[RMDB]
RNA sequence: GGGAACGACUCGAGUAGAGUCGAAAAAACCACUCCAAUGGCCUCUCCUCUUCUGCAGUGGGUGGGACUGGAGGGCCCUGGAGACCCCCCAGCACACUCGCUGACUGAGGGAUGAUGUGAGUGCAAAGUAUAACACUAUGUUCGCAUAGUGUUAUACAAAAGAAACAACAACAACAAC
Reactivity to DMS in 0.01 (KOAc 150mM, MgCl2 10mM, bicine 150mM(pH8.5), 24C), signal-to-noise 4, nucleotides 027 to 126: a140a080c120c010a070c030u010c020c030a090a100u000g010g000c040c040u000c040u010c010c020u000c020u010u010c150u000g010c010a040g010u000g000g000g020u000g000g000g010a150c010u000g000g010a040g000g000g010c010c010c040u000g000g020a180g000a070c000c000c000c010c000c000a020g000c040a140c010a000c000u000c010g020c000u000g000a100c070u000g000a040g000g000g010a050u010g010a110u000g010u000g010a040g010u000g020c130a070a070a160
Reactivity to 2A3 in 0.01 (KOAc 150mM, MgCl2 10mM, bicine 150mM(pH8.5), 24C), signal-to-noise 4, nucleotides 027 to 126: a020a000c050c000a040c040u040c040c010a070a110u140g160g000c010c010u050c000u020c030c010u030c020u140u020c040u090g020c000a020g030u050g030g090g000u020g010g010g150a240c010u000g000g000a000g010g000g000c000c030c030u110g150g010a210g020a240c010c000c000c000c020c010a000g010c010a010c000a000c010u010c000g000c010u010g050a100c010u010g010a030g030g020g010a020u070g020a020u070g080u060g020a020g000u090g040c040a080a000a050